[RMDB]
Structure probing data (DMS and 2A3) for a 177-nucleotide construct. For DMS the reverse transcriptase was MarathonRT. For 2A3, 1,387 sequencing reads were counted. It was measured as part of the RMDB library OK2TST.
RNA sequence: GGGAACGACUCGAGUAGAGUCGAAAAUCACUCCUCUGGCUCAAUGUCAUCUCCUGGGAGAGGUGUGCCCUGAGGAUCCUCAGUAAAGUAGCUGUCACCCUCCAGACCCACGGUGUGGACCCCCACCGUUUAGCCUCAUGUUCGCAUGAGGCUAAACAAAAGAAACAACAACAACAAC
Reactivity to DMS in 0.01 (KOAc 150mM, MgCl2 10mM, bicine 150mM(pH8.5), 24C), signal-to-noise 1, nucleotides 027 to 126: u010c130a120c110u010c000c000u000c000u010g010g030c040u010c060a050a050u020g030u000c020a040u000c030u000c020c040u010g020g000g040a070g160a060g010g020u000g030u000g010c120c050c090u020g000a050g000g010a050u000c040c010u030c020a110g000u000a060a060a080g010u010a070g000c020u010g010u000c050a070c030c030c010u000c040c010a050g000a100c000c000c090a050c070g010g010u010g030u000g000g010a170c030c050c030c060c020a050c130c150
Reactivity to 2A3 in 0.01 (KOAc 150mM, MgCl2 10mM, bicine 150mM(pH8.5), 24C), signal-to-noise 2, nucleotides 027 to 126: u050c030a040c050u000c000c000u000c020u040g070g000c020u000c080a120a110u180g090u130c010a110u040c020u010c010c070u180g100g150g030a210g000a030g010g000u040g020u050g040c000c040c020u000g020a020g000g060a130u070c010c000u020c030a030g070u180a020a140a010g080u060a040g020c030u030g050u140c000a060c030c020c000u040c000c000a060g010a070c010c030c010a020c090g010g000u020g020u050g050g010a050c020c010c000c040c010a010c010c000